[RMDB]
RNA sequence: GGGAACGACUCGAGUAGAGUCGAAAACACUUCUUGUACAAGCACUGUGCUAAAACUAUGGAAGUCGGGGUUCUGCCUCUUCCUCUGUAGUAAUGCUAGCAUGGUACACACGAGAAGAAAAGUAAAUAAGAUGGAUAAAGUUCGCUUUAUCCAUCUUAAAAGAAACAACAACAACAAC
Reactivity to DMS in 0.01 (KOAc 150mM, MgCl2 10mM, bicine 150mM(pH8.5), 24C), signal-to-noise 5, nucleotides 027 to 126: c090a230c000u000u000c010u000u000g010u000a060c120a140a140g000c040a020c010u000g010u000g000c010u000a010a070a080a050c010u000a010u000g000g000a020a040g010u000c170g020g020g010g010u000u050c280u030g000c000c000u000c000u000u010c000c040u000c000u000g010u000a010g010u010a060a050u040g010c210u000a020g000c000a010u000g000g000u000a030c020a070c140a020c000g000a010g000a010a010g000a060a070a070a120g000u020a060a090a110u000
Reactivity to 2A3 in 0.01 (KOAc 150mM, MgCl2 10mM, bicine 150mM(pH8.5), 24C), signal-to-noise 9, nucleotides 027 to 126: c040a010c000u000u000c000u010u020g030u050a050c040a170a060g010c010a020c010u010g000u000g010c000u010a030a060a050a020c000u000a000u010g010g010a010a010g010u020c030g000g000g010g020u080u130c130u300g060c000c000u000c000u010u000c000c000u000c000u010g010u000a000g000u010a090a130u160g130c090u020a000g000c000a000u010g010g000u020a010c020a000c000a010c010g010a000g020a000a000g060a020a080a010a010g150u130a010a080a110u060